[RMDB]
RNA sequence: GGGAACGACUCGAGUAGAGUCGAAAACGGCAAAAAAGCAAACUUGACCACCAAGAAUAAAAGAGAUCUUAUCCAAGGAUGCAAAAGAUAAUCUCACUUUUGACACCCACUGAUCUCGAACUUAAAGAAAACCGAGACUACUUCGGUAGUCUCGGAACAGACCUUACUGCUUCGGCAGUAAGGUCUGAAAAGAAACAACAACAACAAC
Reactivity to 2A3 in 0.01 (KOAc 150mM, MgCl2 10mM, bicine 150mM(pH8.5), 24C), signal-to-noise 1, nucleotides 027 to 156: c000g040g050c000a000a000a000a110a020a170g040c000a130a060a020c030u020u010g030a090c020c000a060c060c020a090a010g080a210a130u050a120a030a040a000g030a000g000a020u000c040u240u100a080u130c090c080a070a080g000g000a030u060g000c000a000a040a000a000g030a020u100a200a300u110c020u070c080a080c060u020u000u010u000g060a080c010a020c030c000c000a020c040u030g000a000u010c000u010c000g020a000a040c010u050u160a000a120a030g130a010a050a030a010c000c000g000a000g000a000c000u000a000c000u020u050c050g050g000u010a010g000u040c000u000c000g000g000a000a000